[RMDB]
RNA sequence: GGGAACGACUCGAGUAGAGUCGAAAAGCACCGUUCGCGGUGCAGAAGCCGUAGGUCUCUAGCGUGUUCUUGGAUUUACACGAAGUCAUGAUUCGAAAGAGUCAUGCCGAGUGUUGUCAGAAUCGGGCCUAAACGGAGAAGCCUAGUUCGCUAGGAAAGCUAGGUCAAUAUUCGUAUUGACCUAGCUAAAAGAAACAACAACAACAAC
Reactivity to DMS in 0.01 (KOAc 150mM, MgCl2 10mM, bicine 150mM(pH8.5), 24C), signal-to-noise 2, nucleotides 027 to 156: g020c000a020c010c010g010u000u000c210g000c040g020g020u010g000c050a030g020a090a290g050c030c010g060u000a080g030g030u010c010u000c070u000a070g030c190g050u010g010u000u000c000u010u010g070g000a040u010u000u010a030c010a050c050g020a250a100g010u020c020a010u000g020a050u000u010c000g030a210a150a170g000a020g020u000c000a010u000g000c030c010g000a300g020u000g020u000u010g000u000c000a100g000a060a050u000c050g010g000g000c000c020u000a040a070a120c060g010g010a180g050a090a210g010c000c000u000a050g040u000u000c090g000c050u000a070g010g010a150a140
Reactivity to 2A3 in 0.01 (KOAc 150mM, MgCl2 10mM, bicine 150mM(pH8.5), 24C), signal-to-noise 3, nucleotides 027 to 156: g000c000a000c010c000g030u060u110c260g010c010g050g000u020g000c000a020g140a040a010g040c020c010g000u020a010g000g020u030c030u030c100u260a090g080c050g090u180g050u080u000c030u080u170g200g020a070u210u150u270a010c000a010c020g110a170a000g030u050c010a010u000g020a020u000u000c000g030a060a080a070g000a040g000u020c010a000u000g000c010c000g020a030g000u000g020u020u030g000u000c010a000g020a020a010u040c030g050g000g000c010c000u060a160a040a010c010g010g020a050g040a110a040g070c010c000u000a020g020u080u130c250g010c100u000a000g100g000a060a070
An RNA of 207 nucleotides, treated with DMS and 2A3 and read out base by base. For DMS, 3,603 sequencing reads were counted. 2A3 adducts were read by reverse transcription with SuperScript II with manganese.